RNA sequence: GGGAACGACUCGAGUAGAGUCGAAAAGGGUAUCGGGCCUCGGCCAAGAAAGCCCAAAUUUGCCAGAAACAGGUCAAGUAUCUGGGGUAUCUUCUAAAGGAGGGUCAGAGAUGGCUGACUGAGGCCACUGGGAAUAGGUUUUCGAACCUAUUCCCAGAAAAGAAACAACAACAACAAC
Reactivity to 2A3 in 0.01 (KOAc 150mM, MgCl2 10mM, bicine 150mM(pH8.5), 24C), signal-to-noise 1, nucleotides 027 to 126: g020g000g000u080a010u180c090g040g000g000c000c000u000c000g000g000c010c000a010a030g110a060a030a010g010c020c010c000a040a000a000u070u020u030g090c040c020a010g080a070a140a030c030a070g040g130u060c050a140a100g010u030a050u040c050u070g000g050g020g050u180a120u000c110u270u060c070u300a140a060a010g110g040a030g000g000g000u060c060a030g020a030g030a110u010g010g030c020u000g070a080c080u090g010a050g020g030c030c020a020
Reactivity to DMS in 0.01 (KOAc 150mM, MgCl2 10mM, bicine 150mM(pH8.5), 24C), signal-to-noise 2, nucleotides 027 to 126: g010g010g030u010a050u010c120g020g020g020c000c000u000c040g020g000c020c010a050a090g000a070a120a230g020c010c000c010a040a080a080u000u000u010g000c020c010a130g000a110a140a080c080a080g010g000u000c060a100a110g020u010a040u000c070u000g010g000g020g000u010a050u000c020u000u010c050u000a150a080a100g020g010a220g000g000g000u010c000a080g000a190g010a170u000g000g020c000u000g010a040c040u000g000a010g020g010c000c040a090